[RMDB]
Conditions: 150 mM KOAc, 10 mM MgCl2 and 150 mM bicine (pH 8.5), 24 C. The record gives the reactivity of an RNA of 177 nucleotides to DMS and 2A3. The data come from the RNA Mapping Database (RMDB), library TTRDES. The 2A3 profile rests on 4,266 reads. For DMS, 2,980 sequencing reads were counted.

RNA sequence: GGGAACGACUCGAGUAGAGUCGAAAAGAUAUGGAACCCAGGCUAGCUGGUGGUCGGAAACGACCAUUCAGCUUGGACCCUGCUACAAAGGUUCCUAAGUCAAAACAGGUGAGUUCGCUCACCUGAACUAUCAUUCGGAGUUCGCUCCGAAUGAUAGAAAAGAAACAACAACAACAAC
Reactivity to DMS in 0.01 (KOAc 150mM, MgCl2 10mM, bicine 150mM(pH8.5), 24C), signal-to-noise 4, nucleotides 027 to 126: g020a010u000a050u020g000g010a030a010c000c000c000a020g000g010c000u000a010g030c000u010g010g030u000g000g010u010c000g000g000a050a010a070c010g020a010c000c000a020u010u010c020a000g010c000u010u010g000g010a020c300c000c000u000g020c220u030a240c300a120a140a200g000g010u000u000c000c010u010a000a150g000u000c000a120a040a070a300c010a020g030g010u010g000a000g020u000u020c290g000c000u010c010a010c000c000u000g010a030a120
Reactivity to 2A3 in 0.01 (KOAc 150mM, MgCl2 10mM, bicine 150mM(pH8.5), 24C), signal-to-noise 2, nucleotides 027 to 126: g010a020u020a000u060g000g000a000a000c000c020c000a000g010g000c030u040a000g010c010u020g000g000u000g000g010u010c000g000g020a040a010a000c000g000a000c010c040a010u260u300c030a000g000c000u010u090g020g000a000c010c000c000u000g000c060u150a190c170a240a210a010g000g000u010u010c000c000u010a020a000g020u030c010a010a030a110a200c010a010g000g020u010g010a020g020u090u170c300g040c120u000c010a000c050c010u000g000a010a010